An RNA of 177 nucleotides, treated with 2A3 and DMS and read out base by base. The RNA was probed in 150 mM KOAc, 10 mM MgCl2 and 150 mM bicine (pH 8.5) at 24 C.
[RMDB]
RNA sequence: GGGAACGACUCGAGUAGAGUCGAAAAUGGGAUACUACAUUGCUUGGGACUGGGAGAGGUAGGAGGUACUCGGGGGGUAGGGGUGAAAUCCUGUAAUCCUCCGGGGACCACCGGUGGCGAAGGCGUCGACGAUACGUUACUUCGGUAACGUAUCGUCAAAAGAAACAACAACAACAAC
Reactivity to 2A3 in 0.01 (KOAc 150mM, MgCl2 10mM, bicine 150mM(pH8.5), 24C), signal-to-noise 2, nucleotides 027 to 126: u100g020g020g020a020u040a120c020u020a030c070a160u100u140g060c050u050u060g050g000g060a100c070u050g040g070g010a120g040a020g020g010u060a030g010g060a030g010g010u010a010c010u010c020g000g000g000g000g010g000u040a020g000g000g000g000u050g050a030a030a000u090c000c010u060g030u050a060a030u050c010c010u000c000c000g000g000g000g000a010c000c000a030c000c000g000g020u000g000g000c050g040a000a030g050g010c030g030u000c050
Reactivity to DMS in 0.01 (KOAc 150mM, MgCl2 10mM, bicine 150mM(pH8.5), 24C), signal-to-noise 2, nucleotides 027 to 126: u050g000g000g020a230u000a030c080u040a090c110a060u050u060g000c050u010u010g000g050g000a190c050u000g000g000g000a170g000a120g010g000u000a090g000g000a120g010g040u000a040c000u000c030g040g000g000g020g000g020u000a040g010g030g010g000u000g000a080a090a050u020c020c010u010g000u030a030a000u000c000c000u010c000c000g030g000g000g000a030c030c020a070c030c020g000g020u050g000g010c080g010a080a090g000g000c040g030u000c090
2A3 is a SHAPE reagent: it acylates the 2'-hydroxyl of flexible nucleotides of all four kinds. Reactivities are given for positions 27 through 126.